An RNA of 177 nucleotides, treated with 2A3 and DMS and read out base by base. Reactivities are given for positions 27 through 126. The 2A3 profile rests on 3,042 reads. Conditions: 150 mM KOAc, 10 mM MgCl2 and 150 mM bicine (pH 8.5), 24 C.
[RMDB]
RNA sequence: GGGAACGACUCGAGUAGAGUCGAAAAGAUAUGGACUCAGCCAACAGCACGCCGGUCGGAAACGACCGCGUGACAUGGCUGGUCCUAAGUCAAAAGGCUACACAGUUGUUCGCAACUGUGUAGCCAACCUUGGAAGGAUGUUCGCAUCCUUCCAAGGAAAAGAAACAACAACAACAAC
Reactivity to 2A3 in 0.01 (KOAc 150mM, MgCl2 10mM, bicine 150mM(pH8.5), 24C), signal-to-noise 2, nucleotides 027 to 126: g010a010u050a020u070g010g030a020c030u080c300a010g010c010c000a090a060c120a210g070c020a000c030g130c190c210g000g000u030c000g010g000a000a050a070c000g000a000c030c000g000c010g010u010g030a050c010a050u040g010g000c000u000g000g000u010c000c000u000a040a010g000u000c010a020a000a140a140g000g000c000u010a000c000a010c000a000g030u030u040g080u120u160c300g070c220a030a000c010u030g010u000g000u000a010g000c000c000a000a010
Reactivity to DMS in 0.01 (KOAc 150mM, MgCl2 10mM, bicine 150mM(pH8.5), 24C), signal-to-noise 2, nucleotides 027 to 126: g000a010u010a300u010g000g000a010c020u010c000a010g030c000c000a020a050c300a180g000c010a000c000g030c150c100g030g050u000c020g010g000a060a050a170c000g000a010c000c000g000c000g000u000g000a010c090a130u000g000g030c010u000g010g000u000c000c010u000a020a070g000u000c020a050a060a130a120g010g000c000u000a020c000a010c000a010g040u000u000g020u000u010c190g020c010a010a040c000u010g020u000g000u000a000g010c010c000a010a010